[RMDB]
RNA sequence: GGGAACGACUCGAGUAGAGUCGAAAAGAUAUCUGGAGGGAUGCCCGAGUGGUUAAAGGGGACGGACUGUAAAUCCGUUGGCUAUGCCUACGUUGGUUCAAAUCCAACUCCCUCCACCACUGUCGGAGUCAUUUAGUCCAUUCGUGGACUAAAUGACAAAAGAAACAACAACAACAAC
Reactivity to 2A3 in 0.01 (KOAc 150mM, MgCl2 10mM, bicine 150mM(pH8.5), 24C), signal-to-noise 3, nucleotides 027 to 126: g030a030u140a030u100c060u070g010g000a010g000g000g020a000u010g000c000c010c000g010a000g040u120g010g230u150u030a010a050a010g010g000g010g010a000c020g000g000a010c020u140g160u300a010a060a030u020c000c000g000u010u010g000g010c050u140a080u300g000c000c000u010a010c010g010u000u000g000g000u040u000c000a020a000a020u000c000c000a000a000c000u010c010c010c010u020c000c000a010c000c000a010c030u100g030u050c010g050g020a020
Reactivity to DMS in 0.01 (KOAc 150mM, MgCl2 10mM, bicine 150mM(pH8.5), 24C), signal-to-noise 3, nucleotides 027 to 126: g030a060u010a040u020c050u000g000g020a080g000g040g020a030u010g000c020c000c000g000a060g000u010g030g040u040u000a020a100a300g000g010g020g000a050c030g000g010a050c010u030g000u000a110a100a250u000c020c000g000u000u000g010g040c020u020a090u020g010c000c000u000a030c030g000u000u010g010g010u000u000c100a060a300a060u010c000c000a000a020c000u010c030c000c000u010c030c070a050c070c040a020c150u000g020u020c020g000g010a170

The record gives the reactivity of an RNA of 177 nucleotides to 2A3 and DMS. In probing experiments dimethyl sulfate is read out at A N1 and C N3, which are open when not base-paired. Conditions: 150 mM KOAc, 10 mM MgCl2 and 150 mM bicine (pH 8.5), 24 C. For DMS, 1,911 sequencing reads were counted.